[RMDB]
RNA sequence: GGGAACGACUCGAGUAGAGUCGAAAAGAUAUGGAGUCAGACAUGCUGGGAGCUUGCGACGAAGGAACAGCGAUCGGAAACGAUCGCUGUUCCAGAGCAAGCUCCAGCAACAGCUGACUCCUAAGUCGCUACAUGUUAUGUUCGCAUAACAUGUAGCAAAAGAAACAACAACAACAAC
Reactivity to DMS in 0.01 (KOAc 150mM, MgCl2 10mM, bicine 150mM(pH8.5), 24C), signal-to-noise 1, nucleotides 027 to 126: g010a080u010a300u010g030g000a020g020u000c000a000g000a040c170a260u000g010c000u000g000g010g030a020g000c010u020u010g020c000g010a140c300g000a160a090g010g020a010a010c010a040g030c040g030a050u000c000g040g010a150a150a160c010g000a030u020c000g020c010u000g000u000u000c000c000a020g000a180g000c000a000a010g040c000u000c000c000a000g000c010a020a020c300a190g000c020u000g000a020c020u010c000c000u000a040a070g010u030c090
Chemical mapping of a 177-nucleotide RNA with DMS.
Values cover nucleotides 27 to 126.